This 177-nucleotide RNA was probed chemically with 2A3 and DMS. Values cover nucleotides 27 to 126. For 2A3, 3,815 sequencing reads were counted. Conditions: 150 mM KOAc, 10 mM MgCl2 and 150 mM bicine (pH 8.5), 24 C.

[RMDB]
RNA sequence: GGGAACGACUCGAGUAGAGUCGAAAAGAUAUGGACAAUUGCGAACAACAGCUAACUGUUUCGGAAACGAAAUUUAGACAUGUUCUAAUUGUCCUAAGUCAAAUCAUACAGGUUCGCCUGUAUGAAAUCGUUGUCUAAUGUUCGCAUUAGACAACGAAAAAGAAACAACAACAACAAC
Reactivity to 2A3 in 0.01 (KOAc 150mM, MgCl2 10mM, bicine 150mM(pH8.5), 24C), signal-to-noise 3, nucleotides 027 to 126: g010a000u010a000u030g000g000a000c010a020a020u030u060g040c240g110a000a010c150a140a020c080a300g000c020u010a030a000c120u100g130u070u000u000c000g000g040a010a000a000c000g000a010a000a000u000u000u000a030g020a090c180a290u300g010u010u010c000u020a020a000u010u020g000u000c000c010u000a010a000g010u000c020a000a040a230u020c000a000u010a020c010a010g020g110u050u120c260g170c070c000u050g000u010a000u040g010a040a020a010
Reactivity to DMS in 0.01 (KOAc 150mM, MgCl2 10mM, bicine 150mM(pH8.5), 24C), signal-to-noise 2, nucleotides 027 to 126: g010a010u000a000u010g000g000a020c000a000a010u010u010g000c300g010a010a020c030a100a080c180a160g020c010u000a010a010c300u030g010u000u000u010c010g010g000a020a020a050c000g010a010a010a010u000u000u010a010g000a030c050a300u020g010u000u000c010u000a010a020u000u010g010u000c000c000u000a010a100g000u000c000a130a080a160u010c000a010u000a000c000a010g020g010u010u010c300g050c000c000u000g000u010a010u000g000a000a070a100